[RMDB]
RNA sequence: GGGAACGACUCGAGUAGAGUCGAAAACGCGGAAAAUACUGCGAAGUUCACGCCGAGCCCGUCCCAGUGCGCGCCGAGCGGAUAGCUGCGCCCCGGUUCGAGGCGAUCGGGCGUGGGUGUCGGCAUAUGAAAAUUUACGUUUCGACGUAAAUUUUCAAAAAGAAACAACAACAACAAC
Reactivity to DMS in 0.01 (KOAc 150mM, MgCl2 10mM, bicine 150mM(pH8.5), 24C), signal-to-noise 3, nucleotides 027 to 126: c040g010c030g010g010a110a120a090a110u010a130c080u000g020c040g000a130a120g000u000u000c060a110c060g010c020c000g000a190g000c010c000c030g020u000c030c010c000a090g010u030g010c080g030c040g000c040c110g010a090g020c010g010g010a140u020a110g020c020u000g010c020g010c040c020c020c030g010g000u000u010c020g010a120g020g000c020g000a080u000c080g020g000g000c040g010u000g000g010g010u010g000u000c040g000g000c040a060u000a120
Reactivity to 2A3 in 0.01 (KOAc 150mM, MgCl2 10mM, bicine 150mM(pH8.5), 24C), signal-to-noise 2, nucleotides 027 to 126: c030g000c030g020g130a180a180a060a040u230a210c040u070g010c020g070a070a020g010u070u070c040a000c080g000c000c010g020a010g030c050c000c020g010u040c000c000c020a030g050u070g070c040g000c060g070c020c040g020a020g030c020g000g050a120u160a050g060c080u110g000c010g000c000c030c020c000g100g000u040u030c030g040a080g040g050c050g030a120u070c060g080g020g030c020g000u130g000g000g010u060g150u010c020g030g000c010a020u050a030